The record gives the reactivity of an RNA of 177 nucleotides to 2A3 and DMS. The DMS profile rests on 5,292 reads. The data come from the RNA Mapping Database (RMDB), library M2PK90. The reactions ran in a buffer of 150 mM KOAc, 10 mM MgCl2 and 150 mM bicine (pH 8.5), at 24 C.
RNA sequence: GGGAACGACUCGAGUAGAGUCGAAAAAGGCAGCUUCCCGGCUUUUAAGCUACGGACCAUGCAAACGUAGCAGGCAUCGAAUUUUCGGCCCUUCGAAAAGCUGAGAUGAGCUCAGCAAGGGAAUCAAUAUAAUAAACCUAUUCGUAGGUUUAUUAUAAAAAGAAACAACAACAACAAC
Reactivity to 2A3 in 0.01 (KOAc 150mM, MgCl2 10mM, bicine 150mM(pH8.5), 24C), signal-to-noise 2, nucleotides 027 to 126: a000g030g000c020a020g010c020u040u000c010c030c000g000g000c000u140u050u040u150a110a030g000c010u000a010c000g020g050a040c080c000a110u160g030c120a180a140a030c020g010u010a000g000c010a010g040g020c010a040u070c090g080a140a110u100u030u090u110c030g050g010c000c010c010u040u050c030g080a120a050a030a070g000c000u010g010a010g000a100u180g130a060g070c000u000c010a000g000c030a030a000g050g000g000a010a010u110c040a120a000
Reactivity to DMS in 0.01 (KOAc 150mM, MgCl2 10mM, bicine 150mM(pH8.5), 24C), signal-to-noise 5, nucleotides 027 to 126: a060g020g010c040a040g020c080u000u000c010c010c010g010g000c030u020u020u000u010a050a150g020c020u000a020c010g000g010a110c070c050a100u000g010c120a070a090a140c020g010u000a020g010c010a100g010g010c050a090u010c050g020a080a120u000u000u010u000c030g020g000c050c010c050u000u000c080g000a080a080a100a090g000c000u000g000a030g010a280u010g010a160g010c010u000c010a010g010c010a050a030g010g000g010a050a070u000c060a050a140
About this RNA: For DMS the reverse transcriptase was MarathonRT.